[RMDB]
An RNA of 177 nucleotides, treated with DMS and 2A3 and read out base by base. It was measured as part of the RMDB libraries RFM100 and RFMREP. Conditions: 150 mM KOAc, 10 mM MgCl2 and 150 mM bicine (pH 8.5), 24 C. Reactivities are given for positions 27 through 126. Reactivities are rounded to 0.1 and cut off at 0 and 3.

RNA sequence: GGGAACGACUCGAGUAGAGUCGAAAAAAAAGCACCCCGGGAGGGGAGUGAAACAGUACCUGAAACCGUGCGCCCGCAAGGCGUCGGAGCACCCUUUUAGAGGUGUGACGGCGUGCCUUUUGUAGAACAAAAUCUAAGUGUUCGCACUUAGAUUUUGAAAAGAAACAACAACAACAAC
Reactivity to DMS in 0.01 (KOAc 150mM, MgCl2 10mM, bicine 150mM(pH8.5), 24C), signal-to-noise 3, nucleotides 027 to 126: a070a030a090a130g030c040a060c040c040c010c030g000g060g020a110g000g000g000g030a040g020u040g000a180a070a080c180a070g020u010a090c020c000u000g000a080a060a050c070c040g000u000g010c030g000c000c020c000g000c140a040a060g020g030c000g010u000c010g000g010a300g000c010a010c010c000c000u000u030u040u030a100g010a090g000g010u010g000u010g000a290c020g000g000c060g020u020g000c020c000u000u010u030u020g010u010a070g000a120a150
Reactivity to 2A3 in 0.01 (KOAc 150mM, MgCl2 10mM, bicine 150mM(pH8.5), 24C), signal-to-noise 3, nucleotides 027 to 126: a000a000a000a020g070c040a050c010c020c000c000g110g010g010a060g060g030g020g010a080g030u100g030a080a070a020c040a020g060u080a030c000c000u030g050a140a000a010c020c020g010u050g010c030g010c000c030c000g020c040a000a000g040g000c010g000u000c000g000g000a000g020c000a030c010c000c000u040u090u070u280a180g100a100g030g000u000g020u020g010a000c000g000g020c010g030u140g040c010c000u030u070u010u090g080u070a040g020a130a000